[RMDB]
RNA sequence: GGGAACGACUCGAGUAGAGUCGAAAAUAACAGUGUCCUGGCGUGAAAACGUCAGGCAAUUAGCAAUGACUGUAUGCUAAUUGCAUUGUGUGAAAACACAAUGAUGCUGUUUAACAGUCAUUGAUACGAACUUGUGGUAUUUCGAUAUUGCAAGUUCAAAAGAAACAACAACAACAAC
Reactivity to 2A3 in 0.01 (KOAc 150mM, MgCl2 10mM, bicine 150mM(pH8.5), 24C), signal-to-noise 9, nucleotides 027 to 126: u060a000a000c000a000g000u000g010u010c000c000u000g000g000c000g000u020g050a060a020a010a010c000g000u000c000a000g000g000c000a000a000u000u000a000g000c000a010a030u050g000a000c000u000g000u010a010u040g000c000u000a000a000u000u000g000c000a000u000u000g000u000g000u010g080a040a010a040a000c000a000c000a000a000u000g000a000u000g000c000u000g000u000u000u020a010a000c000a000g000u000c000a010u020u210g080a040u050a080c100
Reactivity to DMS in 0.01 (KOAc 150mM, MgCl2 10mM, bicine 150mM(pH8.5), 24C), signal-to-noise 9, nucleotides 027 to 126: u020a010a010c010a000g020u000g010u000c010c000u000g010g000c000g010u000g000a130a050a120a010c000g010u000c000a010g010g000c000a000a000u000u000a000g000c000a050a130u010g000a010c000u000g010u000a200u010g010c000u000a000a000u000u000g010c000a030u000u010g010u000g000u000g000a150a070a140a020c000a010c000a000a010u000g010a000u000g000c000u000g000u000u000u000a050a020c000a000g000u000c000a140u030u030g010a110u040a080c220